[RMDB]
RNA sequence: GGGAACGACUCGAGUAGAGUCGAAAAGAUCGAUUUGAGUGAUGAAUCAGAGUUUGGCCAUGAGCUUAGCAUGGAGCAUGAACCAUCUGAUGAGCCAAUGAUGAUGAUAUCAUCGACUAUUACCGCCGCUAUACGACGAUUUCGAUCGUCGUAUAGCAAAAGAAACAACAACAACAAC
Reactivity to DMS in 0.01 (KOAc 150mM, MgCl2 10mM, bicine 150mM(pH8.5), 24C), signal-to-noise 3, nucleotides 027 to 126: g020a100u000c030g010a100u000u040u060g020a090g000u040g000a030u030g020a090a000u000c000a000g000a240g030u010u000u000g040g010c010c000a040u000g010a040g030c300u000u000a020g000c120a020u000g000g000a070g000c220a070u050g010a150a150c030c030a040u000c000u020g000a010u010g020a130g040c040c020a000a020u000g000a150u000g010a070u000g000a100u040a110u010c000a050u010c000g000a010c030u000a070u010u000a140c010c000g000c170c130
Reactivity to 2A3 in 0.01 (KOAc 150mM, MgCl2 10mM, bicine 150mM(pH8.5), 24C), signal-to-noise 9, nucleotides 027 to 126: g050a180u070c050g010a040u060u120u300g150a120g050u120g030a040u040g020a020a040u000c010a010g030a030g080u020u050u080g000g000c010c010a010u050g080a030g100c130u130u170a020g030c030a040u050g060g010a050g070c090a090u160g080a080a090c010c000a020u030c010u050g070a010u010g000a010g010c000c010a040a020u060g060a040u020g000a010u010g030a020u050a050u180c020a000u000c000g010a010c020u040a060u110u110a070c000c030g070c050c040

Chemical mapping of a 177-nucleotide RNA with DMS and 2A3. The RNA was probed in 150 mM KOAc, 10 mM MgCl2 and 150 mM bicine (pH 8.5) at 24 C. For DMS the reverse transcriptase was MarathonRT. High 2A3 reactivity points to a flexible backbone, as in loops and unpaired stretches. Values cover nucleotides 27 to 126. For DMS, 4,113 sequencing reads were counted.